[RMDB]
The record gives the reactivity of an RNA of 177 nucleotides to DMS. The RNA was probed in 150 mM KOAc, 10 mM MgCl2 and 150 mM bicine (pH 8.5) at 24 C. For DMS, 1,414 sequencing reads were counted. DMS adducts were read by reverse transcription with MarathonRT.
RNA sequence: GGGAACGACUCGAGUAGAGUCGAAAAGCGCGGGCCGGCUGGGCCACUCCUCGACCGCCGCCCCCACCCCUCUGGUUGGGGCCGCGCCGGCGCGGACUCCUGCUGUCCGGGGCGGCGGGCCUACGCAAAUACUAGCUGCAUUCGUGCAGCUAGUAUUAAAAGAAACAACAACAACAAC
Reactivity to DMS in 0.01 (KOAc 150mM, MgCl2 10mM, bicine 150mM(pH8.5), 24C), signal-to-noise 1, nucleotides 027 to 126: g000c120g040c010g020g010g020c060c050g020g040c080u000g090g010g000c050c080a050c120u000c050c000u010c080g000a130c060c030g020c020c010g000c030c010c010c000c100a270c040c010c030c080u010c100u010g020g020u000u020g020g010g010g040c030c010g010c000g000c020c050g010g010c020g020c030g000g000a040c030u000c070c040u010g000c060u010g010u000c110c070g030g010g000g030c000g010g010c010g010g010g010c010c010u000a070c110g010c080a070